Overview:
Chemical mapping of a 177-nucleotide RNA with DMS and 2A3. For 2A3, 953 sequencing reads were counted. As a SHAPE reagent, 2A3 marks flexible, mostly unpaired nucleotides at the ribose 2'-OH. The reactions ran in a buffer of 150 mM KOAc, 10 mM MgCl2 and 150 mM bicine (pH 8.5), at 24 C.
RNA sequence: GGGAACGACUCGAGUAGAGUCGAAAAGAAAGUAGCGAAGGUAGACAGCUUCACGGUCUACCAACGUGAAGCAAAAGGUGUACACCAUGUACGUACACCAAGUACGUGGAAAAGCUACGAAAAGAAAGGGUUAUCGAUUGUUCGCAAUCGAUAACCCAAAAGAAACAACAACAACAAC
Reactivity to DMS in 0.01 (KOAc 150mM, MgCl2 10mM, bicine 150mM(pH8.5), 24C), signal-to-noise 1, nucleotides 027 to 126: g000a060a150a060g000u010a070g000c000g000a260a040g040g000u000a000g000a000c060a120g000c000u000u000c040a030c040g000g000u000c000u000a010c210c100a170a030c000g010u000g000a030a030g000c000a160a000a140a250g000g000u000g000u000a000c080a300c030c000a030u000g030u000a000c100g000u010a000c030a300c190c040a090a080g000u000a000c000g000u000g000g000a070a070a000a220g000c010u000a000c000g060a070a080a020a080g000a070a060a170
Reactivity to 2A3 in 0.01 (KOAc 150mM, MgCl2 10mM, bicine 150mM(pH8.5), 24C), signal-to-noise 1, nucleotides 027 to 126: g170a000a120a020g000u000a000g000c020g000a150a000g050g000u000a020g000a210c000a070g000c060u030u000c020a000c040g040g120u030c110u030a010c000c010a000a000c000g000u000g010a000a000g040c020a120a000a000a000g250g000u000g000u040a000c010a000c000c000a000u010g000u160a060c010g100u030a050c090a050c090c040a040a000g000u000a000c010g000u140g030g020a200a270a080a030g000c000u000a000c040g060a030a030a030a030g100a170a080a030